[RMDB]
Structure probing data (DMS and 2A3) for a 207-nucleotide construct. The data come from the RNA Mapping Database (RMDB), library RNAMAK. Conditions: 150 mM KOAc, 10 mM MgCl2 and 150 mM bicine (pH 8.5), 24 C.
RNA sequence: GGGAACGACUCGAGUAGAGUCGAAAAGUCGCUAUUUCGAUAGCGACACCACCUCCUAAGUCUCUCGGGUUGUCAGCUGAUGUCGGAAACGACAUACCAGCUUGGAUUUAUCUCUAGCGUGGAGAUAUGGACUUUGUGCCCACUUUCGAGUGGGCAAUGAUUAUGGAAGGUUCGCCUUCCAUAAUCAAAAAGAAACAACAACAACAAC
Reactivity to DMS in 0.01 (KOAc 150mM, MgCl2 10mM, bicine 150mM(pH8.5), 24C), signal-to-noise 2, nucleotides 027 to 156: g000u000c000g020c000u000a020u000u000u010c230g040a060u000a030g010c020g010a000c010a060c080c040a100c050c010u000c010c020u000a030a170g020u000c000u000c020u010c080g000g000g030u000u010g020u000c080a070g000c020u000g030a040u000g010u000c000g010g000a200a110a250c020g000a000c000a050u000a030c120c020a030g010c010u010u010g030g000a170u010u000u000a040u000c020u000c020u000a140g020c120g040u000g000g000a030g000a020u000a080u000g020g010a110c050u000u000u000g040u000g030c010c000c000a000c000u000u000u010c260g010a040g070u000g020g010g020c000a010a000
Reactivity to 2A3 in 0.01 (KOAc 150mM, MgCl2 10mM, bicine 150mM(pH8.5), 24C), signal-to-noise 3, nucleotides 027 to 156: g020u010c000g000c010u000a010u010u210u100c290g160a020u000a010g020c010g000a020c000a000c000c010a050c010c030u040c000c030u100a160a100g000u010c030u010c010u020c060g050g040g000u090u110g080u090c020a000g010c000u010g000a000u010g000u000c000g020g080a130a080a100c010g020a010c010a020u030a160c070c000a000g020c000u020u070g040g020a030u060u110u190a100u050c040u000c030u150a070g200c040g210u190g080g000a000g000a010u040a060u070g030g000a020c030u110u120u180g120u070g010c000c020c000a020c000u050u110u090c250g030a040g000u000g000g000g000c000a000a010